[RMDB]
RNA sequence: GGGAACGACUCGAGUAGAGUCGAAAAUUGCACAGACUUCCAUAUUUGUAGACUGGCGGUCAUACAAUUAUGCUGUGUCUAGUGCCUUCUGGUUAUUCACCCACAUUCCAAUGGCGGGUUUGGUACGUAAGCUCAUGGUUCGCCAUGAGCAAAAGAAACAACAACAACAAC
Reactivity to DMS in 0.01 (KOAc 150mM, MgCl2 10mM, bicine 150mM(pH8.5), 24C), signal-to-noise 6, nucleotides 027 to 129: u010u000g010c030a010c030a000g000a000c030u020u060c300c010a030u020a060u000u000u000g060u020a050g010a040c050u020g060g000c250g000g000u000c000a110u030a010c000a010a000u020u010a020u030g000c140u000g030u040g020u020c020u000a030g020u020g020c030c140u020u020c060u000g030g020u060u050a020u000u000c120a090c020c010c030a060c070a100u000u030c070c120a110a040u040g030g000c030g000g000g000u010u000u010g000g030u000a040c090g040u050a080a110
Reactivity to 2A3 in 0.01 (KOAc 150mM, MgCl2 10mM, bicine 150mM(pH8.5), 24C), signal-to-noise 9, nucleotides 027 to 129: u120u080g000c000a000c010a000g010a010c030u180u010c060c010a000u000a000u030u020u010g000u000a010g000a010c010u050g220g120c170g110g020u010c000a010u000a040c010a020a020u030u010a000u040g080c150u080g030u010g010u140c020u050a110g020u000g000c000c000u080u090c040u070g120g030u110u100a110u090u090c050a060c000c020c000a040c010a070u150u100c020c040a090a080u040g040g000c060g060g010g000u080u050u100g030g000u070a030c060g040u030a050a060
The data come from the RNA Mapping Database (RMDB), library 15KLIB. Structure probing data (DMS and 2A3) for a 170-nucleotide construct.